This 177-nucleotide RNA was probed chemically with DMS and 2A3.
The RNA was probed in 150 mM KOAc, 10 mM MgCl2 and 150 mM bicine (pH 8.5) at 24 C.
DMS (dimethyl sulfate) methylates the pairing face of unpaired adenines and cytosines.
Values cover nucleotides 27 to 126.
RNA sequence: GGGAACGACUCGAGUAGAGUCGAAAAGAAUUGGUAUGUAAGCUACGUCUUCCGGUAGCUGCGUCACACUUUAAGAGUGUGCAUACUGAGCCGAAGCUCAGCUUCGGUCCCCCAAGGGAAGCGCAAAGGCCGAUUUAGUAUUCGUACUAAAUCGGCCAAAAGAAACAACAACAACAAC
Reactivity to DMS in 0.01 (KOAc 150mM, MgCl2 10mM, bicine 150mM(pH8.5), 24C), signal-to-noise 1, nucleotides 027 to 126: g040a100a080u050u000g000g000u000a000u000g000u000a300a120g000c010u000a000c020g070u030c000u000u010c000c150g000g000u000a000g000c000u000g000c100g050u000c000a030c000a050c000u000u000u020a060a240g020a000g000u000g000u000g000c000a000u000a000c000u000g000a000g010c030c000g010a000a000g000c040u040c150a050g000c020u000u000c000g000g000u020c040c000c010c030c060a060a100g000g000g030a000a000g010c300g000c120a030a240a120
Reactivity to 2A3 in 0.01 (KOAc 150mM, MgCl2 10mM, bicine 150mM(pH8.5), 24C), signal-to-noise 2, nucleotides 027 to 126: g060a070a120u020u040g000g010u000a000u000g000u000a000a000g000c000u000a000c000g030u000c030u000u000c000c000g000g000u010a000g010c000u000g000c000g010u010c000a010c020a000c010u040u170u220a270a130g160a020g300u000g000u000g000c010a000u000a000c000u020g010a000g010c000c000g000a000a000g020c020u060c300a020g030c000u020u000c000g000g000u000c000c000c000c000c000a000a070g110g010g000a010a000g020c050g000c070a080a110a030